The record gives the reactivity of an RNA of 177 nucleotides to DMS and 2A3. Conditions: 150 mM KOAc, 10 mM MgCl2 and 150 mM bicine (pH 8.5), 24 C. For 2A3 the reverse transcriptase was SuperScript II with manganese. The 2A3 profile rests on 36,752 reads. The data come from the RNA Mapping Database (RMDB), library M2PK50. For DMS, 19,275 sequencing reads were counted.
RNA sequence: GGGAACGACUCGAGUAGAGUCGAAAACAUCCAGUGUUCGCACUGGAUGAGAGGAAUGUGGAUCGGCAAACUACAAACCAAAAGCUGAGCUCGAAAGAGCAACGAUUUCGUCGUUCGCGACGAAAAAAUAUCACCAUAAAUUCGUUUAUGGUGAUAUAAAAGAAACAACAACAACAAC
Reactivity to DMS in 0.01 (KOAc 150mM, MgCl2 10mM, bicine 150mM(pH8.5), 24C), signal-to-noise 9, nucleotides 027 to 126: c010a010u010c000c000a010g020u000g010u000u010c230g030c010a010c000u000g000g000a000u000g010a080g010a080g010g010a040a170u000g020u000g010g000a050u000c050g010g000c120a080a090a070c050u000a040c070a040a050a250c030c030a060a050a080a130g010c100u010g000a230g010c000u000c010g010a070a070a130g010a020g020c010a050a070c200g000a180u000u000u000c000g010u000c000g010u000u010c200g030c020g010a010c000g010a000a000a030a070a070
Reactivity to 2A3 in 0.01 (KOAc 150mM, MgCl2 10mM, bicine 150mM(pH8.5), 24C), signal-to-noise 9, nucleotides 027 to 126: c000a000u000c000c000a010g010u000g030u050u090c220g040c080a000c010u000g000g000a000u000g000a020g010a010g010g050a070a040u080g020u050g030g040a100u100c080g110g040c100a070a110a040c020u050a020c040a030a050a030c020c010a050a090a020a030g060c090u110g060a010g030c000u010c010g040a090a050a040g010a000g000c010a010a020c020g040a050u010u020u020c010g010u000c000g010u020u070c220g000c010g080a010c010g000a020a000a000a000a000